[RMDB]
RNA sequence: GGGAACGACUCGAGUAGAGUCGAAAAGGGGUCACGACAUGGGUUCCUGAGAGCGAAGAACUAACUGAAGCCUCCACGGUUAGGGAGCUCUUUGGAACCCAACAGCGUGACGGAGGCACCCAAAACUUAAAAGUUUUGUUCGCAAAACUUUUAAGAACGUAUAGAGACUGUUCGCAGUCUCUAUACGAAAAGAAACAACAACAACAAC
Reactivity to 2A3 in 0.01 (KOAc 150mM, MgCl2 10mM, bicine 150mM(pH8.5), 24C), signal-to-noise 3, nucleotides 027 to 156: g030g000g050g070u000c000a000c010g050a020c210a300u300g020g000g020u000u000c000c000u030g010a010g000a000g010c000g050a260a030g000a010a010c000u010a000a000c000u030g060a140a000g000c000c000u000c000c000a000c000g000g010u000u000a000g010g000g000a010g000c010u000c010u000u000u230g000g000a000a000c000c000c160a080a000c010a000g010c000g000u000g000a000c000g000g000a000g010g000c000a030c000c000c000a040a100a060a070c000u000u000a000a000a000a000g010u000u010u000u000g030u040u070c190g020c230a020a000a000a000c010u020u000u000u000a010a000g000a050a010
Reactivity to DMS in 0.01 (KOAc 150mM, MgCl2 10mM, bicine 150mM(pH8.5), 24C), signal-to-noise 1, nucleotides 027 to 156: g000g030g070g020u000c000a030c030g030a000c050a240u000g060g000g030u010u000c050c010u080g020a080g020a090g040c010g030a090a160g000a130a270c020u040a030a090c030u000g020a060a170g030c040c000u000c000c020a300c030g030g020u010u050a000g000g000g000a080g020c000u000c000u000u000u020g000g010a020a020c070c040c020a000a010c000a100g020c020g050u010g000a040c020g020g020a040g070g080c000a200c020c010c010a070a050a150a140c020u010u000a000a020a010a020g000u000u000u000u000g010u010u020c300g000c000a000a030a010a010c000u000u000u000u000a010a020g020a120a130